Record summary:
Conditions: 150 mM KOAc, 10 mM MgCl2 and 150 mM bicine (pH 8.5), 24 C. The record gives the reactivity of an RNA of 177 nucleotides to DMS and 2A3. 2A3 adducts were read by reverse transcription with SuperScript II with manganese. For 2A3, 9,668 sequencing reads were counted. Source: RMDB library OK2TST, as collected in RNAgym.

[RMDB]
RNA sequence: GGGAACGACUCGAGUAGAGUCGAAAAGCAAUCGCUUUGGGCGUAUCGAGAUCGUCGGCCAGGUAGCGGCGCACCCGAGCGACAACGUCAACUGCGGCCGGACCGGCGGGAAGUGCGGUUGCGGUGCGAUACAGGGAUCAUUCGUGAUCCCUGUAUCAAAAGAAACAACAACAACAAC
Reactivity to DMS in 0.01 (KOAc 150mM, MgCl2 10mM, bicine 150mM(pH8.5), 24C), signal-to-noise 6, nucleotides 027 to 126: g020c050a100a100u000c060g010c010u000u010u000g030g010g030c060g010u010a100u010c070g000a090g000a110u010c010g010u010c050g010g010c020c030a140g020g010u000a060g030c010g000g010c040g010c050a090c030c030c040g010a090g010c050g010a070c100a060a080c080g000u010c100a100a110c050u000g010c030g000g010c010c000g000g010a040c040c040g010g010c040g000g000g010a130a100g010u000g010c010g010g010u000u000g010c020g000g010u000g010c160
Reactivity to 2A3 in 0.01 (KOAc 150mM, MgCl2 10mM, bicine 150mM(pH8.5), 24C), signal-to-noise 5, nucleotides 027 to 126: g030c020a000a130u060c030g000c020u080u080u100g050g040g020c050g080u090a120u190c080g040a050g010a130u050c020g070u010c010g050g040c010c010a040g010g040u050a010g060c010g030g000c000g000c020a090c000c020c010g020a030g040c030g040a040c030a120a030c040g090u080c030a060a030c040u030g010c030g060g000c010c010g000g030a050c020c020g050g010c060g020g040g030a100a030g060u070g080c000g000g000u000u000g010c010g010g030u070g060c050